[RMDB]
RNA sequence: GGGAACGACUCGAGUAGAGUCGAAAAUUCAACAUCGCAGGCACGGUGGUCAAGUACAGGCGGCCCAUGGAUGUCUAUGAGACCGGAAUCGAGUACAUCGUGGCACAGGGGCCCACCAACCAGGGCCUCGCCUUAAGUAGUUCGCUACUUAAGGCGAAAAAGAAACAACAACAACAAC
Reactivity to DMS in 0.01 (KOAc 150mM, MgCl2 10mM, bicine 150mM(pH8.5), 24C), signal-to-noise 4, nucleotides 027 to 126: u010u010c050a090a100c110a070u000c060g030c110a080g030g000c020a070c040g010g030u000g000g010u010c110a050a110g010u010a060c190a100g020g020c210g020g010c040c020c020a060u010g000g020a130u010g000u010c030u010a040u010g020a140g000a050c040c040g020g020a130a090u000c030g010a120g010u000a050c060a050u000c030g020u000g010g030c070a040c130a120g020g000g010g000c010c000c010a070c060c060a030a070c080c070a100g010g000g020c010c020
Reactivity to 2A3 in 0.01 (KOAc 150mM, MgCl2 10mM, bicine 150mM(pH8.5), 24C), signal-to-noise 2, nucleotides 027 to 126: u060u010c010a010a040c040a070u100c040g020c100a080g000g000c010a010c030g000g000u050g040g080u040c040a070a080g070u070a160c050a050g060g130c050g020g010c030c000c010a020u040g080g050a090u070g040u000c020u040a110u080g060a040g020a080c050c020g070g120a060a070u190c030g050a010g040u020a050c010a100u050c020g020u050g020g000c020a020c030a090g000g000g000g000c000c000c020a060c050c010a080a040c010c010a030g050g020g000c000c000